[RMDB]
RNA sequence: GGGAACGACUCGAGUAGAGUCGAAAACUUAUUUACGUAACCUGGCUCUUUACACUUUAGAUGAAGCACGUUUAACCAAUCUGGGAGGGGAACAGAACGUUCGAGCUUUAAUUUUAGGUCAGAUGACCACGAUGGUGAGGUUCGCCUCACCAUCGUGAAAAGAAACAACAACAACAAC
Reactivity to DMS in 0.01 (KOAc 150mM, MgCl2 10mM, bicine 150mM(pH8.5), 24C), signal-to-noise 1, nucleotides 027 to 126: c050u000u010a100u010u000u010a070c130g060u010a060a100c110c060u000g010g000c010u010c010u000u020u050a070c190a090c130u010u000u040a080g000a030u010g020a070a050g010c030a050c090g030u030u000u000a050a110c080c080a020a070u000c050u010g030g030g020a100g010g000g020g000a020a090c090a040g010a030a070c080g030u000u000c110g010a100g000c060u020u000u010a000a070u000u020u020u000a060g010g000u010c040a100g000a090u020g010a050c020
Reactivity to 2A3 in 0.01 (KOAc 150mM, MgCl2 10mM, bicine 150mM(pH8.5), 24C), signal-to-noise 1, nucleotides 027 to 126: c010u120u090a060u250u240u050a090c120g040u060a080a080c010c000u000g040g010c030u050c010u070u100u050a070c090a030c110u090u120u300a140g010a180u160g050a060a030g010c010a010c050g040u000u110u080a050a050c050c030a000a050u100c020u000g000g000g000a130g110g070g000g000a000a000c030a020g010a020a010c050g050u070u070c010g000a010g070c000u010u000u130a040a080u070u140u050u070a020g000g000u020c030a030g090a260u070g010a040c000
The data come from the RNA Mapping Database (RMDB), library OK2TST. An RNA of 177 nucleotides, treated with DMS and 2A3 and read out base by base. The reactions ran in a buffer of 150 mM KOAc, 10 mM MgCl2 and 150 mM bicine (pH 8.5), at 24 C. DMS adducts were read by reverse transcription with MarathonRT.